[RMDB]
RNA sequence: GGGAACGACUCGAGUAGAGUCGAAAAGAUAUGGACAAGCCUGAAUCGUGUAGUGCGACGAAGGACACCUUGAAUCGGAAACGAUUCAAGGUGUCCAGAGCAUCACACGUGAGCUUGUCCUAAGUCACGUACUAGUUAAGUUCGCUUAACUAGUACGAAAAGAAACAACAACAACAAC
Reactivity to 2A3 in 0.01 (KOAc 150mM, MgCl2 10mM, bicine 150mM(pH8.5), 24C), signal-to-noise 6, nucleotides 027 to 126: g030a020u070a050u120g000g000a000c010a000a010g010c020c120u290g150a120a120u170c010g000u000g000u040a170g000u010g000c200g100a300c050g030a300a050g000g000a000c000a000c000c000u000u000g010a000a000u000c010g000g040a070a080a060c020g010a000u000u010c000a000a010g000g000u000g000u000c000c000a000g000a000g000c000a000u070c020a000c000a000c010g000u040g030a020g010c000u000u010g000u020c000c000u010a020a010g010u000c010a020
Reactivity to DMS in 0.01 (KOAc 150mM, MgCl2 10mM, bicine 150mM(pH8.5), 24C), signal-to-noise 6, nucleotides 027 to 126: g000a050u000a300u010g000g010a010c000a010a010g010c000c080u010g010a100a060u000c000g030u000g010u000a050g030u000g010c000g010a210c300g000a150a120g000g010a010c000a000c000c000u000u000g000a010a010u000c000g000g000a150a120a240c010g000a010u000u000c000a000a000g000g020u000g000u000c000c000a010g000a150g010c000a000u000c060a000c010a010c010g010u000g000a190g000c000u010u010g020u000c000c000u000a000a060g010u000c050a300